[RMDB]
Structure probing data (DMS and 2A3) for a 177-nucleotide construct. Reactivities are rounded to 0.1 and cut off at 0 and 3. The DMS profile rests on 1,046 reads. DMS adducts were read by reverse transcription with MarathonRT. 2A3 adducts were read by reverse transcription with SuperScript II with manganese. The data come from the RNA Mapping Database (RMDB), library M2PK50.
RNA sequence: GGGAACGACUCGAGUAGAGUCGAAAAGUGCAGCAGUUCGCUGCUGCACAAAAGGCAUCGUAUCAAUGCUUCGAAGCCAAACUAGAAACUAGAAAGCAGUGAAAAGACACUUCUUCGGAAGUGUCAAUCUCGAAGAGAAGUUCGCUUCUCUUCGAGAAAAAGAAACAACAACAACAAC
Reactivity to DMS in 0.01 (KOAc 150mM, MgCl2 10mM, bicine 150mM(pH8.5), 24C), signal-to-noise 1, nucleotides 027 to 126: g050u010g000c000a020g000c010a000g010u000u010c160g010c000u000g000c000u000g000c010a040c000a000a000a080a130g000g040c020a150u000c050g010u040a020u000c050a040a030u010g010c000u000u000c000g000a120a070g010c000c030a040a050a110c090u000a080g020a090a080a040c190u010a050g020a030a070a080g050c040a020g010u010g000a160a090a090a070g010a000c000a010c000u000u000c010u000u030c280g010g000a010a010g010u020g010u000c010a020a060
Reactivity to 2A3 in 0.01 (KOAc 150mM, MgCl2 10mM, bicine 150mM(pH8.5), 24C), signal-to-noise 2, nucleotides 027 to 126: g000u000g000c000a010g000c010a010g010u040u090c150g050c100u000g000c000u000g020c000a000c000a000a120a000a000g010g010c000a020u000c010g010u020a030u160c040a050a150u070g020c010u040u010c030g010a020a000g000c000c000a050a040a060c020u050a080g220a130a140a040c020u040a050g120a100a120a000g010c010a010g030u070g090a060a040a000a050g000a000c000a000c010u000u040c010u010u050c210g020g000a000a000g000u000g000u010c000a020a000